[RMDB]
RNA sequence: GGGAACGACUCGAGUAGAGUCGAAAAAUAUCAUAAUUAACGAAGUUGGUGCGACGUCUGCAAAGUUUAAUCGGAACAUUUACCAGCGAUGUGAUGGCAUCGUUACGAAGAUCACAAGGGACCUGGCCUGUUUAUUCACAUUCGUGUGAAUAAACAGAAAAGAAACAACAACAACAAC
Reactivity to 2A3 in 0.01 (KOAc 150mM, MgCl2 10mM, bicine 150mM(pH8.5), 24C), signal-to-noise 5, nucleotides 027 to 126: a000u170a030u090c060a030u070a190a090u240u070a060a060c090g070a080a030g040u090u070g050g000u090g010c020g040a050c000g060u010c020u050g030c070a090a070a070g040u050u100u170a100a080u090c070g020g030a050a020c010a060u090u150u060a070c040c030a020g030c010g020a010u060g040u020g100a200u080g040g010c010a020u000c010g020u020u010a040c070g050a070a030g040a060u070c060a020c020a040a020g040g020g010a020c020c000u010g030g010c000
Reactivity to DMS in 0.01 (KOAc 150mM, MgCl2 10mM, bicine 150mM(pH8.5), 24C), signal-to-noise 6, nucleotides 027 to 126: a090u030a060u030c060a090u020a110a090u020u010a080a100c060g000a080a080g020u010u000g000g010u000g000c050g000a050c060g020u010c020u000g010c060a070a050a080g000u020u010u010a080a080u010c080g000g010a070a050c100a090u000u010u020a080c100c050a090g010c030g010a070u000g010u010g010a080u030g020g000c040a050u000c040g010u010u010a050c070g000a050a060g000a060u010c060a040c080a060a090g010g000g000a100c080c010u000g000g020c190